[RMDB]
This 170-nucleotide RNA was probed chemically with 2A3 and DMS. Conditions: 150 mM KOAc, 10 mM MgCl2 and 150 mM bicine (pH 8.5), 24 C. Source: RMDB library 15KLIB, as collected in RNAgym. The 2A3 profile rests on 3,607 reads.
RNA sequence: GGGAACGACUCGAGUAGAGUCGAAAAUUCUUCUUCGACUCGGCCCGGCUCAUUUCGGCAAAGGGCGGCGGUCCUUAGUUCUCUUACUCUUUUCUGUAAAGAGGAGACUGUAGGAUCCGCCGCCCAAAGAGGAGGAGCUUCGGCUCCUCCAAAAGAAACAACAACAACAAC
Reactivity to 2A3 in 0.01 (KOAc 150mM, MgCl2 10mM, bicine 150mM(pH8.5), 24C), signal-to-noise 3, nucleotides 027 to 129: u070u030c020u100u000c000u000u010c010g020a000c000u000c020g010g000c000c000c000g000g000c020u030c030a130u020u020u050c040g030g000c100a100a110a240g010g000g000c000g000g000c000g060g000u010c000c010u020u000a020g050u190u030c010u000c040u010u150a270c020u030c010u080u120u090u060c180u300g300u300a030a000a000g010a000g000g000a010g020a010c000u120g040u060a000g000g000a020u050c050c000g020c010c000g000c000c000c000a010a000a000g000a000
Reactivity to DMS in 0.01 (KOAc 150mM, MgCl2 10mM, bicine 150mM(pH8.5), 24C), signal-to-noise 3, nucleotides 027 to 129: u000u030c000u000u000c120u000u000c000g060a000c020u000c000g020g150c020c060c010g000g080c180u050c020a040u060u000u000c030g000g120c070a050a110a090g010g000g060c030g050g040c000g050g020u010c000c000u020u080a090g050u030u030c010u000c020u120u090a300c040u000c000u050u030u020u040c210u150g100u090a000a000a000g000a030g000g000a000g010a040c000u010g210u040a020g060g000a000u000c030c040g000c010c010g040c020c000c000a000a000a030g000a050